An RNA of 177 nucleotides, treated with 2A3 and DMS and read out base by base. It was measured as part of the RMDB library OK2TST. Reactivities are given for positions 27 through 126. 2A3 adducts were read by reverse transcription with SuperScript II with manganese.
RNA sequence: GGGAACGACUCGAGUAGAGUCGAAAACCGGCUGGGCGGGCUGGGGGAGAGCCUCGCCGGGGUACAGGCCGGACCCUUUGAGACCCUCUCUGCCGCACUUGAACGCGAGUUGGGGUCUAUGCCCGAGCAAUGGACAUUGGUUCGCCAAUGUCCAUUGAAAAGAAACAACAACAACAAC
Reactivity to 2A3 in 0.01 (KOAc 150mM, MgCl2 10mM, bicine 150mM(pH8.5), 24C), signal-to-noise 1, nucleotides 027 to 126: c010c010g010g020c050u040g020g020g040c070g020g010g040c040u030g060g060g050g000g040a110g000a010g030c000c000u110c080g040c040c010g060g000g000g010u090a050c030a030g010g000c000c010g020g010a080c010c000c050u000u080u090g060a000g010a000c020c000c000u000c000u010c060u110g180c060c030g030c010a090c120u210u210g130a230a040c100g010c020g000a010g000u020u070g030g000g020g020u020c000u020a080u090g080c000c000c020g000a060g020
Reactivity to DMS in 0.01 (KOAc 150mM, MgCl2 10mM, bicine 150mM(pH8.5), 24C), signal-to-noise 3, nucleotides 027 to 126: c030c010g000g030c030u000g010g020g020c030g010g000g020c040u020g040g000g000g010g020a140g020a080g010c020c030u000c060g010c020c010g020g010g040g020u010a090c190a110g010g000c010c020g000g000a170c030c010c000u000u010u010g000a040g000a020c010c010c000u020c050u000c010u020g030c150c040g000c100a080c180u000u010g000a100a160c200g020c030g030a040g000u000u010g020g010g010g000u000c010u000a060u010g000c020c020c000g020a190g010